[RMDB]
RNA sequence: GGGAACGACUCGAGUAGAGUCGAAAAGUGUCUUUCAGGUGGAUUGCGGCAAUACGGUCAAUGCCCAGUUUCAGUUCGGCGGAAACAUCAUUGCCCCAGGCGCUGAGGUUGCCGACGUCCGGGUAGACCUAGAUCUCAUCUUCGGAUGAGAUCUAGGAAAAGAAACAACAACAACAAC
Reactivity to 2A3 in 0.01 (KOAc 150mM, MgCl2 10mM, bicine 150mM(pH8.5), 24C), signal-to-noise 2, nucleotides 027 to 126: g040u040g060u030c000u010u140u080c020a050g090g000u070g070g050a050u050u160g050c020g010g000c030a010a050u090a130c070g040g010u050c040a050a040u080g010c000c000c000a050g010u030u060u040c040a050g020u040u070c040g040g010c020g070g040a040a020a010c010a040u080c020a040u040u120g010c000c020c030c040a050g070g000c020g000c050u010g020a010g050g010u040u030g000c000c000g020a070c010g030u010c010c020g030g020g000u050a030g030a030
Reactivity to DMS in 0.01 (KOAc 150mM, MgCl2 10mM, bicine 150mM(pH8.5), 24C), signal-to-noise 3, nucleotides 027 to 126: g020u000g000u000c030u010u010u000c060a090g020g030u010g000g000a050u010u000g020c040g000g020c050a020a070u010a080c150g010g030u000c030a030a090u000g000c040c030c050a130g000u010u010u010c060a080g020u000u000c060g010g010c040g000g000a070a030a030c040a080u000c050a040u010u000g010c040c010c100c170a140g010g010c040g000c060u000g010a040g000g020u000u000g020c010c000g020a050c070g010u000c010c020g010g010g020u000a060g010a140
An RNA of 177 nucleotides, treated with 2A3 and DMS and read out base by base. It was measured as part of the RMDB library OK2TRN.